Chemical mapping of a 177-nucleotide RNA with DMS and 2A3. The reactions ran in a buffer of 150 mM KOAc, 10 mM MgCl2 and 150 mM bicine (pH 8.5), at 24 C. The data come from the RNA Mapping Database (RMDB), library M2PK90. DMS adducts were read by reverse transcription with MarathonRT.
RNA sequence: GGGAACGACUCGAGUAGAGUCGAAAAUUAAUCGGGCUUGUUUGCGCCGCGUAUGCGCUUGCUUGCUUGCUUGCGGGCGAACGGGCUAGUUCCCUUUUGGCGCUUGCUUGCGGGCGGGCAAAAUGAAUGAAUACAUUACCUUCGGGUAAUGUAUUCAAAAAGAAACAACAACAACAAC
Reactivity to DMS in 0.01 (KOAc 150mM, MgCl2 10mM, bicine 150mM(pH8.5), 24C), signal-to-noise 4, nucleotides 027 to 126: u010u010a080a080u010c060g010g010g000c050u000u010g010u000u000u000g010c030g020c020c050g010c120g020u010a050u010g010c100g020c040u010u010g000c040u000u000g010c000u000u000g010c000u000u000g000c010g010g000g020c000g010a040a080c170g000g000g010c060u010a100g000u010u010c030c000c010u000u000u010u010g000g000c060g010c010u000u000g010c010u000u000g010c020g010g000g000c010g010g010g010c010a020a030a050a050u000g000a110a140
Reactivity to 2A3 in 0.01 (KOAc 150mM, MgCl2 10mM, bicine 150mM(pH8.5), 24C), signal-to-noise 2, nucleotides 027 to 126: u100u080a050a080u110c060g040g010g040c010u050u080g050u130u130u090g010c100g010c000c030g130c030g080u120a070u150g060c070g010c040u040u030g000c020u040u030g010c000u020u010g000c010u010u010g000c010g000g080g030c000g000a040a020c010g000g000g000c020u010a040g030u180u260c000c000c020u040u060u020u030g030g000c030g010c000u000u000g010c000u020u020g000c000g010g010g010c000g000g020g000c000a000a020a000a030u140g050a070a050